[RMDB]
RNA sequence: GGGAACGACUCGAGUAGAGUCGAAAACAAUCACCACGAAGCCUCCAGAAAAGGAGGCAAAACCACCUCCAUGGAAAACCAUGGAAAGGUGAAAGCCACGACGUGGUGAAAAACGUGGCUUAACAAAACUAAUUACCAUCUUCGGAUGGUAAUUAGUAAAAGAAACAACAACAACAAC
Reactivity to DMS in 0.01 (KOAc 150mM, MgCl2 10mM, bicine 150mM(pH8.5), 24C), signal-to-noise 4, nucleotides 027 to 126: c020a040a260u020c020a040c010c000a000c010g000a300a210g000c010c000u030c000c000a140g010a110a120a170a070g010g000a010g000g000c010a010a010a110a090c160c010a030c000c020u000c000c000a010u000g000g010a220a070a100a230c020c000a010u010g020g000a000a040a010g000g000u010g000a080a020a030g010c000c000a000c010g010a100c000g010u000g000g000u000g000a000a010a040a040a030c030g000u000g000g000c000u000u000a100a070c200a070a040a100
Reactivity to 2A3 in 0.01 (KOAc 150mM, MgCl2 10mM, bicine 150mM(pH8.5), 24C), signal-to-noise 3, nucleotides 027 to 126: c020a010a030u030c000a000c000c000a010c010g020a070a010g010c000c000u020c000c000a050g240a210a230a020a000g020g010a000g000g000c010a000a000a000a000c020c000a000c000c000u000c000c000a010u010g010g000a040a100a050a190c010c000a000u010g000g000a070a080a050g000g000u000g020a040a000a000g000c000c010a020c010g100a030c000g020u010g010g010u020g050a170a000a000a000a000c010g000u000g000g000c000u010u040a060a030c080a030a060a010